RNA sequence: GGGAACGACUCGAGUAGAGUCGAAAAUUGUGUGCUCGAAACUUGGAUUCAAUUACUUUUUCGUCAAAACAUACCAAAACUCUCUCACUUUUAAAAGUUCAAGUUAACGGAAGUAAGGGGAUCGAUCCGGUGCUUCAUACUUCGGUAUGAAGCACCGAAAAGAAACAACAACAACAAC
Reactivity to 2A3 in 0.01 (KOAc 150mM, MgCl2 10mM, bicine 150mM(pH8.5), 24C), signal-to-noise 1, nucleotides 027 to 126: u060u130g030u000g000u020g030c010u040c040g010a040a070a070c090u080u000g110g000a040u020u040c060a110a150u090u020a080c030u110u120u000u000u030c030g020u020c030a020a020a020a010c000a000u070a080c010c010a000a220a020a070c020u050c010u000c020u040c010a010c000u030u040u050u090a100a160a000a020g030u000u050c000a020a020g000u150u010a050a000c030g000g000a000a000g050u050a030a000g000g000g000g090a050u080c010g080a000u000c030